[RMDB]
Structure probing data (DMS) for a 177-nucleotide construct. Conditions: 150 mM KOAc, 10 mM MgCl2 and 150 mM bicine (pH 8.5), 24 C. Values are in units of 0.01, from 0 to 300, in steps of 10. The data come from the RNA Mapping Database (RMDB), library TTRDEL.

RNA sequence: GGGAACGACUCGAGUAGAGUCGAAAAGAUAUGGAGUGACCCGAUAAGCUGCAUUCGGAAACGAAUGGCAGCUUUUGACGGGUCCUCCUAAGUCAAAUCAAGCCUUUCCUUCGGGAAAGGCUUGAAACUUUGAAUAGUGGUUCGCCACUAUUCAAAGAAAAGAAACAACAACAACAAC
Reactivity to DMS in 0.01 (KOAc 150mM, MgCl2 10mM, bicine 150mM(pH8.5), 24C), signal-to-noise 3, nucleotides 027 to 126: g000a040u000a300u000g010g010a000g010u010g020a020c000c000c000g000a130u000a030a020g010c000u000g010c000a050u000u000c010g010g000a080a080a190c010g000a010a000u010g020g020c000a000g010c010u000u010u000u000g020a170c050g000g000g000u000c000c000u000c000c000u010a010a070g000u010c020a080a110a140u000c000a000a010g010c000c000u000u000u010c000c010u000u010c230g030g010g000a020a010a000g000g010c000u000u000g010a000a060a150